The record gives the reactivity of an RNA of 177 nucleotides to DMS and 2A3.
RNA sequence: GGGAACGACUCGAGUAGAGUCGAAAAGUUACGUGACUGUGAUGCUGUAGCUCCCCAUGAUUUCUUCAUCUUUGAUGUAGACAAAGUUAAAACACCUCAUAUUGUACGUCAGCGUUUAACUGAGUACGGAUAUAUUUCCCUUCGGGGAAAUAUAUCCAAAAGAAACAACAACAACAAC
Reactivity to DMS in 0.01 (KOAc 150mM, MgCl2 10mM, bicine 150mM(pH8.5), 24C), signal-to-noise 1, nucleotides 027 to 126: g010u000u000a020c030g010u000g050a110c080u030g000u020g010a080u010g040c110u000g010u000a020g010c040u000c030c000c010c020a090u010g010a100u000u000u000c030u000u000c040a020u000c020u010u010u000g010a020u000g000u020a020g000a060c280a060a110a090g000u000u000a070a010a070a100c040a090c020c110u010c080a090u000a160u010u000g020u000a030c020g010u010c000a010g030c090g000u010u000u030a050a090c030u010g000a130g020u000a040c120
Reactivity to 2A3 in 0.01 (KOAc 150mM, MgCl2 10mM, bicine 150mM(pH8.5), 24C), signal-to-noise 1, nucleotides 027 to 126: g040u010u010a020c090g010u000g150a090c050u130g060u060g220a110u130g050c030u040g000u030a020g010c030u050c010c060c040c000a030u140g080a220u090u060u020c010u060u030c010a060u000c030u080u040u300g010a020u010g030u030a000g000a010c080a060a060a060g000u040u050a050a130a020a080c000a020c000c000u080c060a060u100a070u160u300g060u000a000c000g160u010c030a000g050c030g060u120u200u190a070a020c010u000g000a000g030u040a000c010
Values cover nucleotides 27 to 126.
The data come from the RNA Mapping Database (RMDB), library 15KREP.
For 2A3, 597 sequencing reads were counted.
The reactions ran in a buffer of 150 mM KOAc, 10 mM MgCl2 and 150 mM bicine (pH 8.5), at 24 C.